[RMDB]
RNA sequence: GGGAACGACUCGAGUAGAGUCGAAAAGAUAUGGACAGAGUGGGACGAGCUGCGUUCGGAAACGAACGGCAGCGAUGAGUCCGCUGUCCUAAGUCAAACCUCAGCCAAUGUUCGCAUUGGCUGAGGAGGGUAUAAGACUGUUCGCAGUCUUAUACCCAAAAGAAACAACAACAACAAC
Reactivity to DMS in 0.01 (KOAc 150mM, MgCl2 10mM, bicine 150mM(pH8.5), 24C), signal-to-noise 4, nucleotides 027 to 126: g010a040u000a140u000g000g010a020c010a010g000a040g020u010g010g000g010a020c000g020a230g020c010u000g010c000g000u000u000c000g020g000a030a030a050c010g010a010a010c000g020g040c010a000g020c000g010a070u010g010a270g020u000c000c000g010c000u000g000u000c000c000u000a000a060g010u000c010a110a160a240c000c000u000c000a000g010c010c000a010a010u000g010u000u020c270g010c010a000u000u000g020g000c030u000g000a010g000g000a020
Reactivity to 2A3 in 0.01 (KOAc 150mM, MgCl2 10mM, bicine 150mM(pH8.5), 24C), signal-to-noise 5, nucleotides 027 to 126: g010a000u030a010u060g000g000a010c020a000g070a030g300u300g100g090g000a030c130g150a050g000c010u000g010c010g000u000u000c000g010g020a040a030a000c010g010a020a020c060g300g110c030a000g010c010g010a060u080g030a020g010u000c000c000g000c000u000g000u000c000c000u000a020a010g000u000c040a100a040a180c010c000u010c010a010g000c000c000a020a000u010g030u070u140c300g020c200a010u010u000g010g000c020u000g000a000g000g000a010
Source information:
Chemical mapping of a 177-nucleotide RNA with DMS and 2A3. For DMS, 9,274 sequencing reads were counted. Values cover nucleotides 27 to 126. For 2A3, 16,000 sequencing reads were counted.